[RMDB]
RNA sequence: GGGAACGACUCGAGUAGAGUCGAAAAUCGAUGGCGUUCGCGCCAUCGAAGAGCCGUACCGCGUAGCACGCGGAUAGGAGUGAAGAUAUCCAAGGCGAUGGAGGAGGCGUGCUUUCGAGCACGCCAACAACAAAGACCGAUUCGUCGGUCUUUGUUGAAAAGAAACAACAACAACAAC
Reactivity to DMS in 0.01 (KOAc 150mM, MgCl2 10mM, bicine 150mM(pH8.5), 24C), signal-to-noise 6, nucleotides 027 to 126: u000c010g000a010u000g010g010c000g030u010u000c250g030c010g020c000c000a000u000c010g020a010a030g000a130g010c010c010g000u010a150c010c000g010c000g020u000a130g020c100a300c030g010c030g010g000a090u010a080g010g010a080g010u000g000a100a060g010a090u000a080u000c030c040a060a110g010g010c050g000a120u000g010g000a100g010g000a200g010g000c000g010u000g010c000u000u000u000c110g000a020g010c000a020c000g010c000c010a010a040
Reactivity to 2A3 in 0.01 (KOAc 150mM, MgCl2 10mM, bicine 150mM(pH8.5), 24C), signal-to-noise 4, nucleotides 027 to 126: u020c000g010a000u010g000g000c030g020u070u040c250g000c000g000c060c000a000u000c000g010a000a000g020a020g000c020c030g050u100a070c010c000g010c000g030u020a030g090c180a030c090g000c010g030g000a010u100a040g020g020a020g040u110g100a090a100g060a160u110a040u110c020c030a030a050g070g000c050g060a090u090g040g060a080g010g080a050g000g020c000g010u010g000c000u110u050u130c230g050a000g000c000a000c000g010c000c000a010a000
An RNA of 177 nucleotides, treated with DMS and 2A3 and read out base by base. For 2A3 the reverse transcriptase was SuperScript II with manganese. Conditions: 150 mM KOAc, 10 mM MgCl2 and 150 mM bicine (pH 8.5), 24 C. The DMS profile rests on 6,525 reads. The 2A3 profile rests on 5,751 reads.